RNA sequence: GGGAACGACUCGAGUAGAGUCGAAAAAUAAAAUAUGUCCCAGUUCGGAUUGUUCUCUGCAACUCGAGAGCAUGAAGCCGGAAUCGCUAGUAAUCGCAAAUCAGCCAUGUUGCGGUGAAUACGUUCCUCAUGCCACGCAAUUCGUUGCGUGGCAUGAAAAAGAAACAACAACAACAAC
Reactivity to DMS in 0.01 (KOAc 150mM, MgCl2 10mM, bicine 150mM(pH8.5), 24C), signal-to-noise 1, nucleotides 027 to 126: a070u030a050a000a060a060u080a050u010g000u000c010c000c030a080g000u000u030c000g030g020a100u030u010g040u000u000c010u020c050u000g050c160a100a040c200u010c050g000a110g000a070g040c000a010u020g000a170a180g070c110c020g010g000a060a000u090c070g000c250u000a030g000u000a120a000u000c140g050c000a080a030a090u000c160a070g000c280c110a090u010g010u030u000g000c000g040g010u030g000a060a110u000a080c000g000u000u000c000c000
Reactivity to 2A3 in 0.01 (KOAc 150mM, MgCl2 10mM, bicine 150mM(pH8.5), 24C), signal-to-noise 2, nucleotides 027 to 126: a040u060a030a030a040a000u210a130u090g160u040c020c030c000a010g050u130u270c040g000g000a030u000u000g040u000u000c000u000c000u090g090c040a110a090c100u120c100g000a000g020a000g050c020a050u000g030a070a060g080c030c000g000g000a020a090u150c030g000c120u000a000g000u020a000a000u030c000g000c040a020a000a140u070c050a040g180c080c060a170u240g050u080u000g010c000g070g000u000g000a010a010u100a150c080g000u000u000c000c000